[RMDB]
The record gives the reactivity of an RNA of 177 nucleotides to 2A3 and DMS. The reactions ran in a buffer of 150 mM KOAc, 10 mM MgCl2 and 150 mM bicine (pH 8.5), at 24 C. For DMS the reverse transcriptase was MarathonRT. Reactivities are rounded to 0.1 and cut off at 0 and 3. For 2A3 the reverse transcriptase was SuperScript II with manganese.
RNA sequence: GGGAACGACUCGAGUAGAGUCGAAAAGUACCUCGAUAUAGCGACAUGUGCCAUCGACAAAGUGAUGCGCUUCGAUGACGUGCUGGCUUUGUCCAUUCGCCAUGACCUUUUGGUCGAGUUCGACAGAGCAUUUGACGCUUUUCGAAGCGUCAAAUGCAAAAGAAACAACAACAACAAC
Reactivity to 2A3 in 0.01 (KOAc 150mM, MgCl2 10mM, bicine 150mM(pH8.5), 24C), signal-to-noise 2, nucleotides 027 to 126: g030u080a050c010c040u000c010g050a030u090a010u030a120g150c070g050a070c010a080u040g210u220g050c020c000a010u030c010g030a030c040a030a090a000g080u110g060a160u090g010c000g000c000u030u060c160g240a210u240g050a030c060g000u030g050c000u000g010g000c000u000u020u020g000u000c050c000a020u050u050c010g000c020c020a040u070g070a160c000c030u110u140u140u000g110g000u060c010g010a000g070u020u110c040g030a020c000a040g060a030
Reactivity to DMS in 0.01 (KOAc 150mM, MgCl2 10mM, bicine 150mM(pH8.5), 24C), signal-to-noise 1, nucleotides 027 to 126: g000u000a100c100c020u000c010g010a070u000a010u010a080g030c070g020a020c160a020u000g000u040g040c010c220a020u000c230g000a080c030a060a030a090g020u000g010a030u020g000c030g000c010u000u000c070g020a180u030g000a010c110g000u000g000c080u020g000g000c000u010u000u000g000u000c070c080a020u000u010c200g010c050c010a000u000g020a070c080c110u000u000u000u000g020g040u000c010g010a040g010u000u000c180g030a040c100a060g000a110